[RMDB]
RNA sequence: GGGAACGACUCGAGUAGAGUCGAAAAAUUUAAGAGCCAGGACGGUCACCUUUGGGGUGGUGACAAGUGUGAUCACUUGGGUGGUGGCUGUGUUUGCGUAUCUCCCAGGAAUCUCGUUUACCAGAUCGAUCCAGGAUUUAUUCGUAAAUCCUGGAUCAAAAGAAACAACAACAACAAC
Reactivity to 2A3 in 0.01 (KOAc 150mM, MgCl2 10mM, bicine 150mM(pH8.5), 24C), signal-to-noise 7, nucleotides 027 to 126: a000u220u240u140a130a050g030a010g050c010c000a010g000g040a010c010g020g000u020c000a010c000c000u090u170u230g080g000g000g000u020g020g020u020g020a010c030a040a080g180u170g020u040g220a050u060c010a000c000u010u030g100g000g010u070g010g060u010g010g000c000u000g010u020g090u080u080u050g020c020g010u100a070u040c060u000c010c010c000a000g060g040a040a070u030c040u010c040g040u040u050u080a200c040c020a050g010a110u130c040
Chemical mapping of a 177-nucleotide RNA with 2A3.
Values cover nucleotides 27 to 126.
For 2A3 the reverse transcriptase was SuperScript II with manganese.
The RNA was probed in 150 mM KOAc, 10 mM MgCl2 and 150 mM bicine (pH 8.5) at 24 C.
2A3 is a SHAPE reagent: it acylates the 2'-hydroxyl of flexible nucleotides of all four kinds.
The data come from the RNA Mapping Database (RMDB), library OK1LIB.